Conditions: 150 mM KOAc, 10 mM MgCl2 and 150 mM bicine (pH 8.5), 24 C. Structure probing data (2A3 and DMS) for a 177-nucleotide construct. Reactivities are given for positions 27 through 126. For 2A3, 13,907 sequencing reads were counted.

[RMDB]
RNA sequence: GGGAACGACUCGAGUAGAGUCGAAAAGCCAUGGGCUGGGCCUUCGCCCUGUCCUCCAUGCUGUGCGUGCCGCUGCACCUCCUGGGCUGCCUCCUCAGGGCCAAGGGCACCAUGGCUGAGGUAAGGCCGUUACUGAGAAGUUCGCUUCUCAGUAACGAAAAGAAACAACAACAACAAC
Reactivity to 2A3 in 0.01 (KOAc 150mM, MgCl2 10mM, bicine 150mM(pH8.5), 24C), signal-to-noise 4, nucleotides 027 to 126: g020c020c020a040u090g010g020g060c060u100g040g050g060c020c040u110u150c120g010c000c000c000u020g060u050c000c010u010c030c010a070u140g000c010u040g010u050g030c070g050u030g020c020c010g150c120u080g000c020a060c020c030u080c010c010u020g000g020g000c050u080g050c010c000u050c000c000u030c010a020g000g000g010c010c050a050a050g020g000g010c020a020c010c000a010u010g010g000c020u030g010a030g020g060u080a050a090g030g000c020
Reactivity to DMS in 0.01 (KOAc 150mM, MgCl2 10mM, bicine 150mM(pH8.5), 24C), signal-to-noise 6, nucleotides 027 to 126: g000c030c020a060u000g010g000g020c070u010g020g010g010c040c080u000u000c280g000c020c000c000u000g010u000c030c010u010c060c110a090u000g010c030u000g020u010g010c130g010u000g010c020c050g020c080u010g000c090a090c100c050u000c040c020u000g000g000g010c080u000g000c070c020u000c100c010u000c020a020g000g000g010c090c080a060a070g010g000g010c020a060c000c000a020u000g000g010c000u010g000a040g010g010u010a080a090g000g010c050